[RMDB]
RNA sequence: GGGAACGACUCGAGUAGAGUCGAAAAAUCGGCCCGUUCGCGGGCCGAUACAGGCGGAGGCUCGCACCUAGCGACCGGCGCAAGGACGCUCGGUACUGCGAAUUGACUGUGGAUUCGUCCACAGUAACUACCAUGAACACUUCGGUGUUCAUGGUAGAAAAGAAACAACAACAACAAC
Reactivity to DMS in 0.01 (KOAc 150mM, MgCl2 10mM, bicine 150mM(pH8.5), 24C), signal-to-noise 2, nucleotides 027 to 126: a020u010c020g020g000c010c000c010g030u000u000c170g020c020g010g030g010c000c000g040a020u010a040c150a070g030g010c040g000g000a110g020g000c070u000c060g010c070a090c050c020u020a070g000c010g020a050c020c020g000g010c080g010c120a090a130g010g000a070c040g010c010u000c040g010g000u000a090c080u010g000c020g000a120a100u020u020g000a020c010u000g020u000g000g010a010u000u000c130g010u000c000c000a000c000a020g000u000a020a090
Reactivity to 2A3 in 0.01 (KOAc 150mM, MgCl2 10mM, bicine 150mM(pH8.5), 24C), signal-to-noise 2, nucleotides 027 to 126: a000u010c000g000g030c000c080c020g010u040u020c190g000c040g030g000g080c000c010g000a000u000a010c020a000g040g070c010g010g070a040g130g000c040u010c030g000c000a020c030c020u010a020g010c030g060a030c010c020g050g040c080g000c090a020a110g090g030a100c010g020c030u090c060g080g050u100a170c120u090g000c000g070a030a060u120u200g100a010c010u000g000u010g010g020a010u060u020c200g050u000c050c000a010c000a000g000u000a000a020